[RMDB]
RNA sequence: GGGAACGACUCGAGUAGAGUCGAAAAGGAACUAUGCUGGAAGACGAAGCCUCCACGUCGUCGUUUCGACGUCCGUAGACGGGAUAGCAUAGUUAAGAUCUGGAGGAGGCACGGAUCAAAAUAAAAACGUGCAUGAAGUGUUCGCACUUCAUGUACGAAAAGAAACAACAACAACAAC
Reactivity to DMS in 0.01 (KOAc 150mM, MgCl2 10mM, bicine 150mM(pH8.5), 24C), signal-to-noise 8, nucleotides 027 to 126: g000g000a030a000c000u000a000u000g010c000u000g000g020a170a060g000a010c000g000a080a160g010c020c000u000c000c010a300c010g000u000c000g020u010c100g020u000u010u040c050g010a120c050g000u010c050c220g030u020a080g000a020c040g000g000g000a240u010a020g000c010a010u010a000g000u000u010a050a070g010a010u010c000u000g010g000a190g000g010a020g000g010c000a190c000g010g000a000u000c010a120a080a060a100u060a030a070a060a110a130
Reactivity to 2A3 in 0.01 (KOAc 150mM, MgCl2 10mM, bicine 150mM(pH8.5), 24C), signal-to-noise 9, nucleotides 027 to 126: g090g010a000a010c000u000a000u000g000c000u000g000g040a060a020g020a020c010g020a060a010g000c000c000u000c000c000a010c000g010u010c000g040u030c040g070u030u090u180c080g040a050c030g060u030c040c030g050u050a040g040a090c040g010g000g030a020u020a010g000c000a000u000a000g000u010u020a040a020g000a000u000c000u010g020g020a080g030g000a000g010g010c010a010c020g000g000a000u010c030a030a040a040a020u220a020a040a010a000a010
Background
An RNA of 177 nucleotides, treated with DMS and 2A3 and read out base by base. The 2A3 profile rests on 45,693 reads. The reactions ran in a buffer of 150 mM KOAc, 10 mM MgCl2 and 150 mM bicine (pH 8.5), at 24 C. The data come from the RNA Mapping Database (RMDB), library OK1LIB.